Source information:
An RNA of 177 nucleotides, treated with DMS and 2A3 and read out base by base. It was measured as part of the RMDB library OK2TST. Conditions: 150 mM KOAc, 10 mM MgCl2 and 150 mM bicine (pH 8.5), 24 C. Reactivities are given for positions 27 through 126. The DMS profile rests on 2,242 reads.
[RMDB]
RNA sequence: GGGAACGACUCGAGUAGAGUCGAAAAUUUUUUGGUGAAAAGAGGGUAUUGAUGUAUGUAGAUAUUGGUACUCAGUCAGGUAGCUGCCCAGGAUCCAGUAGCAGCACUAACCUACAUAAAUAACCCACGCACUCAUAUUAUUCGUAAUAUGAGUGCGAAAAGAAACAACAACAACAAC
Reactivity to DMS in 0.01 (KOAc 150mM, MgCl2 10mM, bicine 150mM(pH8.5), 24C), signal-to-noise 3, nucleotides 027 to 126: u010u000u000u010u010u010g000g010u000g020a080a070a140a140g000a150g000g000g020u000a020u000u000g010a040u010g000u000a060u000g030u000a110g010a050u010a040u010u000g030g000u000a020c040u000c020a100g010u000c110a040g010g000u010a110g010c030u000g000c030c050c060a180g020g000a060u020c160c100a090g000u000a060g010c010a030g010c030a070c050u000a050a030c060c000u010a070c050a040u000a040a020a030u000a070a150c010c000c020a240
Reactivity to 2A3 in 0.01 (KOAc 150mM, MgCl2 10mM, bicine 150mM(pH8.5), 24C), signal-to-noise 2, nucleotides 027 to 126: u050u050u050u050u040u030g030g000u090g050a070a040a070a050g120a110g000g010g000u010a010u000u040g040a040u020g000u150a060u130g180u120a060g030a270u040a030u140u030g000g000u000a010c000u020c040a030g150u060c030a010g050g000u060a040g020c000u000g000c030c060c050a090g060g060a080u050c040c040a010g030u140a020g030c000a000g030c000a000c010u000a030a020c000c010u050a070c030a100u140a030a090a010u030a030a020c000c000c030a030